[RMDB]
RNA sequence: GGGAACGACUCGAGUAGAGUCGAAAACGGACGGGCUUCGGCCCGUCCGAAAGUACGAACAUGUCAAAUCUCGCAGACAUGAUACGUACAAAAGCGAGAAAAAAACGAGAUAGUUCGCUAUCUCGAACUACCAAGUAACGUUCGCGUUACUUGGUAGAAAAGAAACAACAACAACAAC
Reactivity to DMS in 0.01 (KOAc 150mM, MgCl2 10mM, bicine 150mM(pH8.5), 24C), signal-to-noise 1, nucleotides 027 to 126: c020g020g010a020c010g000g000g020c010u000u010c190g040g010c000c000c010g050u000c010c000g000a000a040a080g000u000a040c010g020a120a240c010a010u000g000u020c000a070a070a060u010c050u000c070g030c060a110g010a000c000a000u000g000a090u000a030c080g010u040a010c080a070a030a200a090g010c040g020a080g070a000a000a080a010a020a130a120c020g010a000g000a030u000a020g000u000u000c300g020c020u000a000u000c010u000c000g000a030a120
Reactivity to 2A3 in 0.01 (KOAc 150mM, MgCl2 10mM, bicine 150mM(pH8.5), 24C), signal-to-noise 2, nucleotides 027 to 126: c000g020g020a000c020g000g020g020c020u080u110c170g140g000c080c000c000g040u010c020c000g000a010a000a000g000u030a000c020g020a050a010c000a000u000g000u010c020a000a120a240u100c110u080c140g020c090a000g000a010c000a000u000g000a050u070a050c020g040u050a030c040a020a080a010a000g050c080g050a070g100a110a050a010a000a010a000a030c010g000a000g000a000u020a000g000u040u080c250g000c100u000a000u000c010u010c010g010a000a010
This 177-nucleotide RNA was probed chemically with DMS and 2A3.
The 2A3 profile rests on 1,838 reads.
Conditions: 150 mM KOAc, 10 mM MgCl2 and 150 mM bicine (pH 8.5), 24 C.
For DMS, 1,073 sequencing reads were counted.